[RMDB]
RNA sequence: GGGAACGACUCGAGUAGAGUCGAAAAUUCUCAGCACUCAUCAAGAAGUAGGCUUAGGCCAAUUGCUUGGUGGUGAAAGUAGAGUGAAGGUAGCACUUCGACGCCUCUAAGUACGCUGUGGGAGUAGAAAACUGGACAUCGUUCGCGAUGUCCAGAAGUCUUAUAACCACUUCGGUGGUUAUAAGACAAAAGAAACAACAACAACAAC
Reactivity to DMS in 0.01 (KOAc 150mM, MgCl2 10mM, bicine 150mM(pH8.5), 24C), signal-to-noise 2, nucleotides 027 to 156: u010u000c010u000c010a220g010c020a060c020u000c010a030u010c010a060a050g010a030a070g040u000a120g040g000c000u010u000a160g070g020c000c010a060a070u030u000g020c020u000u000g040g040u010g000g010u010g010a060a050a100g000u000a080g000a170g020u000g010a110a070g010g010u000a170g020c100a100c060u000u000c040g020a090c010g020c060c000u000c030u000a100a120g000u000a040c020g000c000u000g020u000g000g000g010a130g010u010a130g000a070a070a070a170c000u000g010g000a030c000a000u010c000g020u000u000c300g040c020g000a020u000g000u010c000c000a000g000a010a050
Reactivity to 2A3 in 0.01 (KOAc 150mM, MgCl2 10mM, bicine 150mM(pH8.5), 24C), signal-to-noise 4, nucleotides 027 to 156: u070u000c020u010c020a030g020c010a000c030u220c020a050u020c010a030a020g020a100a030g040u110a060g020g000c030u100u120a120g000g130c020c010a070a130u070u090g030c020u010u010g000g000u010g030g000u020g030a100a030a000g110u120a010g030a030g030u080g040a090a010g040g040u070a030g050c050a030c080u050u030c060g040a040c050g060c010c020u060c020u060a070a010g040u050a050c040g020c090u050g030u070g050g030g020a050g040u100a030g130a030a090a020a020c000u000g010g010a000c000a000u000c000g020u040u020c050g000c010g110a000u000g010u000c010c000a000g000a000a000